[RMDB]
RNA sequence: GGGAACGACUCGAGUAGAGUCGAAAAUUAAAUAGCGUAAUCGACAUUGAGAAUGUACGCUAAGUGUGUGUUGUAUGGGCAACGUCCAAUUGAACACACACACAGUAGGACCUAAUGUCGAAAAAAAUCCUCCUUGUAGAUUCGUCUACAAGGAGGAAAAAGAAACAACAACAACAAC
Reactivity to DMS in 0.01 (KOAc 150mM, MgCl2 10mM, bicine 150mM(pH8.5), 24C), signal-to-noise 3, nucleotides 027 to 126: u000u000a030a070a130u020a060g010c020g010u000a050a090u020c030g020a030c020a000u000u010g000a070g000a070a120u000g010u000a030c010g020c010u000a040a070g010u000g040u000g020u000g000u000u010g030u010a070u000g020g010g020c020a120a110c300g010u010c010c000a030a150u000u010g020a050a040c000a000c000a010c000a000c000a030c110a110g020u010a040g010g010a140c020c020u000a030a010u000g010u000c000g020a000a000a020a110a070a040a130
Reactivity to 2A3 in 0.01 (KOAc 150mM, MgCl2 10mM, bicine 150mM(pH8.5), 24C), signal-to-noise 2, nucleotides 027 to 126: u180u090a040a020a070u080a050g050c020g000u040a030a120u030c000g000a000c000a010u030u020g030a020g030a110a120u120g000u060a030c040g000c020u010a120a110g000u000g000u010g000u010g020u030u060g160u130a100u050g030g010g000c070a240a120c220g020u000c010c000a010a040u060u120g090a070a000c010a000c000a000c000a000c000a000c010a000g120u120a060g060g070a010c010c000u020a020a000u010g000u000c000g030a070a010a000a000a010a020a010